[RMDB]
RNA sequence: GGGAACGACUCGAGUAGAGUCGAAAAUGCGUUCACGCGGGAGAGCGUGCGCCGACUCGCGGAGCGUGGGAUGCACGCGUUGACAUGCAGGGAGGCGCAGGGCUACAGCGUCCGGCGCGCCUGCUUGCCCGACUUCACGCUUCGGCGUGAAGUCGGGAAAAGAAACAACAACAACAAC
Reactivity to 2A3 in 0.01 (KOAc 150mM, MgCl2 10mM, bicine 150mM(pH8.5), 24C), signal-to-noise 2, nucleotides 027 to 126: u100g000c030g080u080u060c000a000c170g000c020g010g020g050a090g000a020g000c090g020u270g060c230g000c030c000g000a020c010u000c020g030c040g040g030a050g030c010g020u010g040g010g040a130u250g080c100a050c040g090c020g020u030u090g130a130c030a120u050g010c000a000g020g000g050a070g130g100c000g000c060a030g000g000g000c030u120a230c170a130g110c090g020u000c000c000g060g000c020g020c000g010c020c000u000g010c000u030u110g020
This 177-nucleotide RNA was probed chemically with 2A3. Source: RMDB library OK1LIB, as collected in RNAgym. 2A3 adducts were read by reverse transcription with SuperScript II with manganese. The 2A3 profile rests on 665 reads. Conditions: 150 mM KOAc, 10 mM MgCl2 and 150 mM bicine (pH 8.5), 24 C.